[RMDB]
RNA sequence: GGGAACGACUCGAGUAGAGUCGAAAAUGGACUUUUUACAGUUCCUACUUAUCCGGUUUUAACGCUGUUUUAUUGGCGCAAAGGUUUACGGAUAAACAACUAAUAAUUAAAGCUUUUGUGUGCGAAAAUUGGACGUUUAGGUUCGCCUAAACGUCAACAUUUACCCGGGAUUCGUCCCGGGUAAAUGAAAAGAAACAACAACAACAAC
Reactivity to DMS in 0.01 (KOAc 150mM, MgCl2 10mM, bicine 150mM(pH8.5), 24C), signal-to-noise 1, nucleotides 027 to 156: u000g020g000a110c030u020u020u000u030u010a050c070a130g030u000u000c000c010u020a190c300u000u000a030u000c010c000g040g010u000u000u000u040a130a120c060g070c000u000g010u020u040u020u000a100u060u000g050g000c040g060c020a090a100a150g020g000u000u010u020a060c050g000g000a050u000a030a030a210c020a050a160c030u000a020a210u000a020a160u010u000a180a140a120g000c000u000u000u000u000g000u000g000u000g020c070g000a090a020a020a200u000u000g000g000a010c000g020u000u000u000a000g010g000u000u000c300g040c000c010u000a000a010a030c000g020u000c000a000a080
Reactivity to 2A3 in 0.01 (KOAc 150mM, MgCl2 10mM, bicine 150mM(pH8.5), 24C), signal-to-noise 2, nucleotides 027 to 156: u090g000g030a070c020u120u120u070u080u120a030c050a060g010u060u130c010c000u000a020c040u020u010a020u020c010c010g110g040u020u070u050u130a090a050c040g010c030u040g190u110u120u080u220a150u200u190g010g000c010g000c020a040a000a050g050g050u030u060u060a030c000g000g000a000u060a040a060a000c020a010a020c080u160a030a100u110a220a050u130u190a200a090a000g020c000u050u080u040u070g080u010g070u060g020c040g070a000a020a100a240u140u060g110g010a010c000g000u000u000u000a000g000g020u000u020c150g140c040c010u000a000a000a010c000g000u020c000a000a000